[RMDB]
Conditions: 150 mM KOAc, 10 mM MgCl2 and 150 mM bicine (pH 8.5), 24 C. Structure probing data (DMS and 2A3) for a 207-nucleotide construct. For DMS, 5,232 sequencing reads were counted. For DMS the reverse transcriptase was MarathonRT.
RNA sequence: GGGAACGACUCGAGUAGAGUCGAAAAUUGCCGAUCAGGCUGUGUUGUGGCGUGGGCGAAACAGGAUCGACAAGGGUGUAAAGAUCGCUCUUUUACUCGGCAUGAUACCACCGUUAUCGGGUCAACAAAAAGAAUAUGUGGUUCGCCACAUAUUCAACUAUUGCACAGAGUUCGCUCUGUGCAAUAGAAAAGAAACAACAACAACAAC
Reactivity to DMS in 0.01 (KOAc 150mM, MgCl2 10mM, bicine 150mM(pH8.5), 24C), signal-to-noise 2, nucleotides 027 to 156: u000u010g010c040c010g000a060u000c090a110g020g030c050u020g020u000g040u000u000g020u000g020g000c050g030u000g020g010g000c050g000a070a060a080c070a130g060g030a030u000c020g030a070c050a040a110g010g000g020u000g030u000a090a080a140g020a130u020c040g000c040u000c010u000u010u010u010a080c040u000c020g010g000c030a060u000g000a090u000a070c040c030a010c030c020g000u000u000a040u000c050g000g000g030u000c050a080a150c090a070a020a080a110a070g010a020a030u000a010u000g020u010g000g020u000u000c300g010c040c010a000c000a000u000a020u000u000c000a050a080
Reactivity to 2A3 in 0.01 (KOAc 150mM, MgCl2 10mM, bicine 150mM(pH8.5), 24C), signal-to-noise 3, nucleotides 027 to 156: u120u040g040c040c010g030a090u120c060a050g040g000c040u000g020u000g010u040u130g050u070g030g000c040g020u010g010g020g010c040g030a020a030a000c040a030g040g030a080u070c030g040a040c060a070a030g040g040g000u020g030u090a070a090a020g070a050u070c050g030c030u030c000u020u110u020u030a070c060u020c010g000g000c010a010u080g010a010u030a010c000c010a000c000c010g060u040u050a040u080c020g020g020g030u030c020a000a040c060a020a090a020a000a000g000a000a000u000a000u010g000u020g020g020u020u060c210g020c040c000a000c000a000u000a000u000u000c000a000a000